Structure probing data (DMS and 2A3) for a 177-nucleotide construct. The data come from the RNA Mapping Database (RMDB), library TTRDES. The RNA was probed in 150 mM KOAc, 10 mM MgCl2 and 150 mM bicine (pH 8.5) at 24 C.
RNA sequence: GGGAACGACUCGAGUAGAGUCGAAAAGAUAUGGACAAAGAGAGCUUUUGACGAGGAUGGUUCGGAAACGAACCUACCCUCGAUAAGCUCCUUUGUCCUAAGUCAAAGAGUUAGGUUCGCCUAACUCCAAUUAGUAAGACUUCGGUCUUACUAAUUGAAAAGAAACAACAACAACAAC
Reactivity to DMS in 0.01 (KOAc 150mM, MgCl2 10mM, bicine 150mM(pH8.5), 24C), signal-to-noise 9, nucleotides 027 to 126: g000a030u010a300u010g000g010a010c000a010a010a010g000a210g010a010g010c000u000u000u010u010g020a260c170g000a010g000g010a040u000g000g010u000u000c000g010g000a090a050a160c010g010a010a010c000c010u000a040c160c000c000u000c000g010a060u000a010a020g010c000u000c000c000u000u000u000g010u000c000c000u000a000a070g000u000c030a110a100a150g000a020g010u000u000a000g000g010u000u010c300g020c010c000u000a000a010c000u000c000
Reactivity to 2A3 in 0.01 (KOAc 150mM, MgCl2 10mM, bicine 150mM(pH8.5), 24C), signal-to-noise 9, nucleotides 027 to 126: g010a000u060a020u160g000g000a010c010a010a010a000g300a020g010a000g040c030u120u200u300u300g300a270c140g000a000g010g000a000u010g020g000u000u000c000g010g020a050a050a030c010g000a000a010c000c000u010a020c000c000c000u000c000g000a010u010a010a000g000c000u010c000c000u010u000u000g000u000c000c000u000a000a000g010u000c010a090a120a080g010a000g000u000u010a020g030g070u040u090c300g100c090c000u000a010a000c000u000c000